Chemical mapping of a 207-nucleotide RNA with 2A3.
For 2A3 the reverse transcriptase was SuperScript II with manganese.

RNA sequence: GGGAACGACUCGAGUAGAGUCGAAAAAGGUUCGCUGUGGUGCAACUCUUAUUAGUAACUAAUCCAAAGCAAGUAUAGGGGAACAGGUUUUUAACUAUUUUUAGGCAGAUAAAAAAUAGUAUUUGACAAAAUCGAUUGUCGUUCGCGACAAUCGAAAUCAUUCAAAGUCGUUCGCGACUUUGAAUGAAAAAGAAACAACAACAACAAC
Reactivity to 2A3 in 0.01 (KOAc 150mM, MgCl2 10mM, bicine 150mM(pH8.5), 24C), signal-to-noise 1, nucleotides 027 to 156: a000g010g030u060u020c010g000c010u000g060u030g000g020u040g060c020a030a020c030u000c030u060u100a110u060u200a050g030u060a070a100c110u040a080a060u100c050c010a140a100a070g020c000a010a000g050u060a120u040a100g000g000g050g000a070a000c020a100g070g000u000u010u000u010u010a000a000c000u000a000u000u000u000u000u000a010g070g000c010a000g010a160u110a040a010a000a000a050a050u000a020g010u000a070u090u130u070g040a020c060a000a280a000a070u030c000g000a000u000u000g000u000c030g020u080u130c220g000c010g050a010c000a000a000u000c000g000a000a000a000